An RNA of 177 nucleotides, treated with DMS and 2A3 and read out base by base.
For 2A3 the reverse transcriptase was SuperScript II with manganese.
Conditions: 150 mM KOAc, 10 mM MgCl2 and 150 mM bicine (pH 8.5), 24 C.

RNA sequence: GGGAACGACUCGAGUAGAGUCGAAAAUAGUGCAUAAAGAAAAUAUAAUGCUCAAUUUGUCGGCAACUGAUAAAGAAUCCGUAUUGUCACAAAUGUCAGAUGUGUUAUUUCAAAAUGGGUUCGUGAAGUCUCUGAAGAUAUUCGUAUCUUCAGAGACAAAAGAAACAACAACAACAAC
Reactivity to DMS in 0.01 (KOAc 150mM, MgCl2 10mM, bicine 150mM(pH8.5), 24C), signal-to-noise 3, nucleotides 027 to 126: u020a010g000u000g000c010a030u030a050a140a120g000a120a060a100a080u070a140u030a060a030u020g010c030u000c040a100a050u000u000u000g010u000c130g040g010c020a030a040c060u000g010a050u030a050a140a090g030a090a020u010c010c040g010u020a140u000u000g030u000c000a010c000a020a030a060u000g000u000c150a100g000a070u010g020u000g010u000u000a060u000u010u010c030a040a040a090a060u010g000g000g000u010u020c040g000u040g000a150a160
Reactivity to 2A3 in 0.01 (KOAc 150mM, MgCl2 10mM, bicine 150mM(pH8.5), 24C), signal-to-noise 6, nucleotides 027 to 126: u130a020g080u080g050c050a040u110a090a210a070g180a060a100a100a000u190a030u060a050a050u060g010c000u000c070a050a060u000u010u020g040u000c090g000g000c000a030a030c010u020g020a030u080a090a260a060g180a120a010u010c010c000g000u060a070u130u030g010u000c000a000c000a010a040a030u090g070u110c060a030g020a130u060g040u000g010u040u060a080u020u130u060c080a030a070a050a130u110g030g010g080u020u020c040g050u090g110a060a030